[RMDB]
RNA sequence: GGGAACGACUCGAGUAGAGUCGAAAAUACGCACACAAGUUGAUUUAGCUAAAGAAGUCUUUUCUAUACCAGUAUAUAUUUGCUCACAACCUUUAGCCAAUACUCUCAUAGGAGAACUUGCAAGCUAGCGAUGAGGAGUAUUCGUACUCCUCAUCGCAAAAGAAACAACAACAACAAC
Reactivity to 2A3 in 0.01 (KOAc 150mM, MgCl2 10mM, bicine 150mM(pH8.5), 24C), signal-to-noise 2, nucleotides 027 to 126: u050a020c070g030c000a000c000a040c020a100a060g010u040u050g130a170u160u060u160a000g000c000u050a110a000a010g010a040a000g010u030c050u030u050u050u000c050u080a100u020a040c000c040a060g130u000a170u000a000u000a000u130u050u090g040c020u030c020a080c020a140a150c020c090u110u130u030a000g000c000c020a000a000u020a040c010u010c000u030c050a030u080a040g080g000a010g000a120a100c000u000u060g120c010a060a030g040c010u020a020
Background:
Conditions: 150 mM KOAc, 10 mM MgCl2 and 150 mM bicine (pH 8.5), 24 C. Chemical mapping of a 177-nucleotide RNA with 2A3. For 2A3 the reverse transcriptase was SuperScript II with manganese. It was measured as part of the RMDB library OK1LIB.